[RMDB]
Overview: The record gives the reactivity of an RNA of 177 nucleotides to DMS and 2A3. For 2A3, 5,151 sequencing reads were counted. 2A3 adducts were read by reverse transcription with SuperScript II with manganese. Reactivities are rounded to 0.1 and cut off at 0 and 3. The data come from the RNA Mapping Database (RMDB), library TTRDES.
RNA sequence: GGGAACGACUCGAGUAGAGUCGAAAAGAUAUGGAUCCGACAGACGCGAUAAGUUCCCAUCGGAAACGAUGGAAGAACUUUUGACGCGUCUGACGGAUCCUAAGUCAAAGUAGCCUUCGGGCUACAACAUAAGGUACUGCUUCGGCAGUACCUUAUGAAAAGAAACAACAACAACAAC
Reactivity to DMS in 0.01 (KOAc 150mM, MgCl2 10mM, bicine 150mM(pH8.5), 24C), signal-to-noise 3, nucleotides 027 to 126: g020a040u000a300u010g000g010a000u000c000c000g020a150c010a000g010a000c010g030c000g030a150u000a030a030g000u000u000c000c010c000a000u000c000g000g000a200a080a190c020g000a020u000g000g000a110a110g000a020a000c010u000u010u010u000g010a210c110g000c010g010u000c000u000g010a040c020g000g010a000u000c000c000u000a000a070g030u000c020a100a110a140g000u000a000g000c000c000u000u010c230g040g010g000c010u010a020c000a120a150
Reactivity to 2A3 in 0.01 (KOAc 150mM, MgCl2 10mM, bicine 150mM(pH8.5), 24C), signal-to-noise 3, nucleotides 027 to 126: g030a020u060a020u160g000g000a000u000c000c010g030a020c010a000g000a000c000g020c060g140a070u050a300a010g000u010u000c010c010c000a000u000c020g000g060a070a060a020c010g010a000u000g010g080a260a280g010a010a060c100u020u090u040u190g190a130c220g010c000g000u020c000u010g000a000c000g020g000a000u000c000c000u000a010a010g000u010c020a030a000a200g010u000a000g000c020c000u040u160c300g080g000g000c000u010a000c000a000a000